[RMDB]
RNA sequence: GGGAACGACUCGAGUAGAGUCGAAAAGAUCGUAGAAGAAUACGGUAUAGGUAGCGAUGUGAUUCCAUCCGGCGUCACGCACGUACAGGUCGGUGGUGAUCACGUCUCUACGGGUUCUGAGGGAGUAUUACCAGAGCACCAUAUCUACGCGACUGUCCUACUCAUGGCAUUUCGAUGCCAUGAGUAGAAAAGAAACAACAACAACAAC
Reactivity to 2A3 in 0.01 (KOAc 150mM, MgCl2 10mM, bicine 150mM(pH8.5), 24C), signal-to-noise 3, nucleotides 027 to 156: g030a140u050c020g000u040a020g030a180a010g070a090a080u070a110c070g000g050u070a070u120a180g140g000u000a000g000c010g010a000u000g000u000g000a010u030u000c010c010a100u120c050c000g000g050c020g140u150c030a020c120g140c050a080c130g060u200a090c050a060g060g050u030c000g010g000u020g000g010u130g020a000u000c000a000c000g000u000c000u000c000u000a000c000g000g020g000u010u010c020u020g030a280g070g050g030a100g110u170a160u220u160a050c030c010a010g000a010g000c010a030c040c010a030u030a040u050c010u010a020c030g010c020g050a050c050u070g060u130c000
Reactivity to DMS in 0.01 (KOAc 150mM, MgCl2 10mM, bicine 150mM(pH8.5), 24C), signal-to-noise 1, nucleotides 027 to 156: g000a110u000c000g050u010a070g000a140a110g000a130a140u010a090c070g040g040u000a190u000a120g000g030u010a010g020c100g000a040u000g030u000g000a040u000u010c000c030a020u000c040c070g030g010c030g040u010c040a140c120g000c150a050c110g040u000a080c050a070g090g000u000c000g040g090u000g000g000u000g010a010u000c000a030c000g030u000c000u000c030u000a000c010g000g000g020u000u000c040u000g000a110g000g000g020a250g020u000a070u010u000a110c000c010a170g000a090g000c030a100c010c020a070u000a100u000c040u000a060c070g040c020g040a140c000u010g010u000c030